[RMDB]
RNA sequence: GGGAACGACUCGAGUAGAGUCGAAAAGAUAUGGAUAUGACACGAGGUGCGACUAUUCGGAAACGAACGAAUCGCACUACCCACCGUGGAGUAUCCUAAGUCAAAGUCUCCUGUUCGCAGGAGACAAGUGCAGAAAAAAGUUCGCUUUUUUCUGCACAAAAGAAACAACAACAACAAC
Reactivity to 2A3 in 0.01 (KOAc 150mM, MgCl2 10mM, bicine 150mM(pH8.5), 24C), signal-to-noise 2, nucleotides 027 to 126: g030a020u070a020u140g000g000a000u010a000u060g040a010c000a010c010g020a020g020g000u010g020c010g000a030c050u140a080u090u030c030g000g030a100a060a070c030g000a030a000c030g060a120a260u000c000g030c000a000c010u010a010c000c020c010a070c030c020g030u010g000g000a000g000u000a000u000c010c000u000a130a010g060u040c050a080a080a080g000u000c000u000c020c000u020g060u070u090c300g000c140a000g000g000a020g000a010c000a000a010
Reactivity to DMS in 0.01 (KOAc 150mM, MgCl2 10mM, bicine 150mM(pH8.5), 24C), signal-to-noise 3, nucleotides 027 to 126: g000a040u000a300u000g000g000a020u000a000u000g010a300c000a000c000g010a100g030g000u010g000c010g010a030c100u000a300u000u000c000g000g010a080a060a140c020g010a000a010c080g000a060a050u000c010g000c020a000c010u000a010c040c040c090a300c090c000g000u000g000g000a300g010u000a000u010c000c000u000a050a090g010u000c050a070a090a210g010u000c000u000c000c000u000g000u020u000c250g030c010a010g020g010a000g000a010c000a010a030
The data come from the RNA Mapping Database (RMDB), library TTRDEL. This 177-nucleotide RNA was probed chemically with 2A3 and DMS. For 2A3, 4,760 sequencing reads were counted. Values cover nucleotides 27 to 126. DMS adducts were read by reverse transcription with MarathonRT.